The record gives the reactivity of an RNA of 177 nucleotides to DMS and 2A3.
RNA sequence: GGGAACGACUCGAGUAGAGUCGAAAAGAUAUGGAGAUCCCUGUGGGAGCGAUGUGGUCGGAAACGACCAUAAAUCGCAUCGAUCACACAUGGGAUCUCCUAAGUCAAAUCAGCCUUCGGGCUGAAAGGAUAUUGACUGGUUCGCCAGUCAAUAUCCAAAAGAAACAACAACAACAAC
Reactivity to DMS in 0.01 (KOAc 150mM, MgCl2 10mM, bicine 150mM(pH8.5), 24C), signal-to-noise 2, nucleotides 027 to 126: g000a020u000a300u000g000g010a000g030a000u000c000c000c010u000g020u000g010g020g010a080g020c010g010a040u010g030u000g000g000u000c000g000g010a090a100a270c000g010a010c000c010a030u010a030a080a170u000c300g000c040a020u000c110g010a120u000c030a050c000a000c020a000u020g030g000g000a010u000c000u000c000c000u000a000a050g000u000c040a100a070a180u000c000a000g020c010c000u000u010c270g040g000g020c000u030g000a010a090a150
Reactivity to 2A3 in 0.01 (KOAc 150mM, MgCl2 10mM, bicine 150mM(pH8.5), 24C), signal-to-noise 2, nucleotides 027 to 126: g000a000u030a020u120g000g010a010g000a010u000c010c000c020u010g010u010g020g060g050a260g040c030g000a020u010g030u150g050g010u010c000g000g060a070a030a060c010g000a010c020c010a000u080a020a150a020u080c050g000c010a030u170c090g040a070u070c010a010c010a010c010a190u300g000g000g000a000u000c000u000c000c000u000a010a000g000u010c000a000a020a150u020c000a000g000c000c000u100u110c300g190g000g000c020u030g030a070a000a000
Values cover nucleotides 27 to 126.
The 2A3 profile rests on 3,917 reads.
The reactions ran in a buffer of 150 mM KOAc, 10 mM MgCl2 and 150 mM bicine (pH 8.5), at 24 C.
The DMS profile rests on 1,610 reads.